[RMDB]
RNA sequence: GGGAACGACUCGAGUAGAGUCGAAAAAACCUAAGAGGUUACGCAAAAAGCGUAAUGUUGACCCUUUGUCCAAUUUUGAACAUAAGGUUAUUACAGAGUGCGUUACCAUAGUUUUAGGUGACGCAAUUACGGUCGUAGUUCGCUACGACCAAAAGAAACAACAACAACAAC
Reactivity to DMS in 0.01 (KOAc 150mM, MgCl2 10mM, bicine 150mM(pH8.5), 24C), signal-to-noise 4, nucleotides 027 to 129: a010a010c000c000u080a060a090g030a000g070g000u000u000a010c040g040c020a030a070a070a140a110g000c010g030u020a020a010u000g030u000u000g000a000c180c010c040u020u020u020g030u000c070c000a040a180u040u010u030u020g000a040a040c010a000u040a020a010g000g020u030u010a050u000u000a010c160a120g040a070g040u000g000c000g010u000u000a010c000c010a100u040a110g060u000u000u000u000a110g030g030u010g010a000c000g000c030a080a000u090u070a090c160
Reactivity to 2A3 in 0.01 (KOAc 150mM, MgCl2 10mM, bicine 150mM(pH8.5), 24C), signal-to-noise 5, nucleotides 027 to 129: a000a000c070c030u070a130a050g060a030g150g000u010u000a010c000g020c020a070a090a040a080a110g000c010g000u010a010a010u080g030u010u090g050a040c020c000c000u010u010u010g000u000c000c040a100a110u010u070u050u250g040a040a010c010a020u170a070a020g020g000u010u080a030u050u060a080c040a020g080a030g100u070g000c000g000u000u000a000c000c000a050u070a190g180u070u060u100u160a020g010g000u020g010a000c010g000c010a000a040u030u030a010c020